Conditions: 150 mM KOAc, 10 mM MgCl2 and 150 mM bicine (pH 8.5), 24 C.
An RNA of 177 nucleotides, treated with 2A3 and DMS and read out base by base.
DMS adducts were read by reverse transcription with MarathonRT.
The DMS profile rests on 5,766 reads.
Reactivities are given for positions 27 through 126.
RNA sequence: GGGAACGACUCGAGUAGAGUCGAAAAAUGUGGAUGAAUUAGAAGGCAUUACAUUUUUACUUGCCUGUUAUAACGAAAGUGAAACGAUUGAAGAUACGUUGUCUAAUGUUCUUGCACUCAAAUACGAUCUUAUUAGGAGCUUCGGCUCCUAAUAAGAAAAAGAAACAACAACAACAAC
Reactivity to 2A3 in 0.01 (KOAc 150mM, MgCl2 10mM, bicine 150mM(pH8.5), 24C), signal-to-noise 1, nucleotides 027 to 126: a000u020g010u020g070g060a020u040g000a010a130u090u060a080g070a210a080g140g000c000a030u000u040a030c000a000u000u050u010u020u030a080c040u010u100g070c010c000u110g040u250u070a170u030a100a020c080g030a080a010a080g010u010g060a150a010a000c070g000a030u050u130g040a040a020g010a010u060a110c010g010u010u020g120u050c060u090a060a070u020g000u010u040c030u030u000g040c030a070c030u070c020a080a000a050u190a070c090g040a070
Reactivity to DMS in 0.01 (KOAc 150mM, MgCl2 10mM, bicine 150mM(pH8.5), 24C), signal-to-noise 6, nucleotides 027 to 126: a010u000g000u000g010g020a010u000g000a040a040u000u000a190g020a170a140g000g000c000a010u000u010a040c010a010u010u010u000u000u010a100c190u000u010g010c010c020u000g010u010u000a070u010a130a040c060g000a070a080a090g010u000g010a060a060a050c070g010a080u000u000g010a080a040g000a080u010a050c070g010u000u000g010u000c120u010a050a070u010g000u000u010c030u000u000g010c070a030c070u000c060a050a060a110u010a090c180g010a130